[RMDB]
RNA sequence: GGGAACGACUCGAGUAGAGUCGAAAAUGUCCUCCCGUCCUCCUCGCUUCUCCUUCUUGUCGGACCGGCUCAUCUCGGCGAGAGGCGAGCGGUCCUCAGUGCUCUUACUCUUUUCUGUAAAGAGGAGACCAUAUGGACGAUUCGUCGUCCAUAUGGUAAAAGAAACAACAACAACAAC
Reactivity to DMS in 0.01 (KOAc 150mM, MgCl2 10mM, bicine 150mM(pH8.5), 24C), signal-to-noise 2, nucleotides 027 to 126: u010g000u000c040c020u000c030c010c020g020u000c050c020u000c010c010u000c000g020c040u000u000c020u000c030c040u000u000c040u000u010g030u000c200g020g000a040c010c000g010g020c010u000c000a040u000c010u000c020g020g030c200g000a190g000a030g000g000c090g000a010g020c020g000g020u000c000c000u000c040a050g020u020g000c090u000c010u010u000a150c040u000c010u000u010u000u000c140u000g000u020a040a050a040g030a030g000g010a090g000
Reactivity to 2A3 in 0.01 (KOAc 150mM, MgCl2 10mM, bicine 150mM(pH8.5), 24C), signal-to-noise 1, nucleotides 027 to 126: u080g040u060c000c000u020c000c000c000g050u050c000c000u000c000c020u010c010g070c010u000u040c010u060c000c000u070u050c030u040u100g110u090c060g000g030a030c020c020g200g070c000u000c010a020u010c000u010c000g050g140c110g090a160g000a000g080g000c010g010a010g010c000g000g000u080c020c000u000c000a000g000u020g030c010u000c020u010u110a160c010u010c000u040u100u090u010c080u180g290u260a050a000a000g010a010g000g000a010g030